[RMDB]
RNA sequence: GGGAACGACUCGAGUAGAGUCGAAAAGAAGAGCAGGCAGAUAAUCUUGUGCAGUAUGCAUGCUCUUAUCUCCACACGAAGUAAGGCAGCAAAAGAAUAACUGCCACUGCACAAGUGGAGCCGCAGAAUGCGAGCAUCCAUUCGUGGAUGCUCGCAUAAAAGAAACAACAACAACAAC
Reactivity to DMS in 0.01 (KOAc 150mM, MgCl2 10mM, bicine 150mM(pH8.5), 24C), signal-to-noise 2, nucleotides 027 to 126: g020a010a020g000a010g010c010a020g050g000c000a100g020a200u020a120a150u050c000u000u000g020u010g010c000a040g060u000a090u030g000c000a020u000g000c000u010c000u000u000a020u000c000u000c000c170a020c160a170c170g030a170a020g040u000a230a180g000g010c000a000g000c300a100a050a110a060g010a100a000u000a140a130c000u000g000c030c040a120c000u000g000c010a000c030a020a020g060u000g050g000a020g000c040c020g000c130a110g010a120
Reactivity to 2A3 in 0.01 (KOAc 150mM, MgCl2 10mM, bicine 150mM(pH8.5), 24C), signal-to-noise 2, nucleotides 027 to 126: g200a020a000g000a010g010c010a040g040g050c020a010g010a190u120a210a090u120c020u030u030g030u020g040c010a050g000u120a080u130g020c000a010u020g000c000u000c000u000u010a020u040c010u050c000c000a140c000a020c050g050a120a000g090u170a000a040g030g000c000a010g000c010a030a050a030a200g180a160a040u070a070a000c000u000g010c000c000a000c000u000g020c010a010c010a000a020g000u000g000g000a010g000c000c010g000c030a030g080a100